RNA sequence: GGGAACGACUCGAGUAGAGUCGAAAACGUACACCACAACUUCAUGAAAACUGUCAAAGUAUUUAUAAUAAGCUCAAAGCUAAAUAUUCCUUACUUGAUCAUAUUUGGACACAUGUUCAUGUAAAUCUACGCGCGAUAUGGACAAGAGGAGCCCCGGCUGUCUGAAACCAUUCGUGGUUUCAGACAGAAAAGAAACAACAACAACAAC
Reactivity to 2A3 in 0.01 (KOAc 150mM, MgCl2 10mM, bicine 150mM(pH8.5), 24C), signal-to-noise 1, nucleotides 027 to 156: c080g010u110a010c070a100c080c000a010c070a140a140c040u080u100c010a040u080g060a000a070a010a110c030u040g050u080c000a050a050a140g010u040a220u030u030u110a010u080a250a130u070a030a040g000c000u000c170a100a080a030g000c010u110a010a030a180u100a250u030u080c030c000u040u040a100c000u030u060g000a040u040c030a030u020a060u080u020u060g000g000a000c040a000c000a110u030g000u140u160c090a000u010g000u090a030a030a030u010c030u040a130c150g000c000g000c000g040a000u000a010u140g040g000a000c000a000a000g000a000g190g000a040g170c000c220c200c000g140g010